Structure probing data (2A3 and DMS) for a 177-nucleotide construct.
The data come from the RNA Mapping Database (RMDB), library OK2TST.
Conditions: 150 mM KOAc, 10 mM MgCl2 and 150 mM bicine (pH 8.5), 24 C.

[RMDB]
RNA sequence: GGGAACGACUCGAGUAGAGUCGAAAACUUAGCCAAUACGCUUUGAACUGAACUAUAGCGUUUGUAGUUACCAUUUUAGCGUAAGCAAAAGCCAAAAUAGUAGAUGUUUGCGUAAACGCAGAUUGAGAUUUUGAGUUCGUUUCGACGAACUCAAAAUAAAAGAAACAACAACAACAAC
Reactivity to 2A3 in 0.01 (KOAc 150mM, MgCl2 10mM, bicine 150mM(pH8.5), 24C), signal-to-noise 1, nucleotides 027 to 126: c010u130u140a010g040c010c010a020a020u010a030c010g050c010u120u050u200g060a090a010c020u090g000a010a010c000u040a000u030a010g080c070g140u080u040u010g120u040a180g050u020u050a040c000c040a050u040u090u060u300a100g010c100g000u000a040a030g000c010a030a030a030a030g040c010c040a050a190a030a050u140a020g010u040a020g080a130u040g060u020u030u080g000c010g010u040a000a110a000c030g000c000a020g000a090u080u150g130a130g020
Reactivity to DMS in 0.01 (KOAc 150mM, MgCl2 10mM, bicine 150mM(pH8.5), 24C), signal-to-noise 2, nucleotides 027 to 126: c050u010u000a090g000c010c040a040a300u000a030c020g000c020u010u010u020g010a020a040c020u010g000a300a050c030u010a040u000a130g010c050g010u000u010u000g020u000a010g010u000u000a080c070c010a170u000u000u000u000a130g000c100g020u010a040a070g020c010a000a030a030a060g030c040c130a070a040a050a030u010a030g000u000a130g020a190u000g010u010u000u000g010c000g020u000a020a040a240c300g020c000a080g000a120u000u030g000a140g000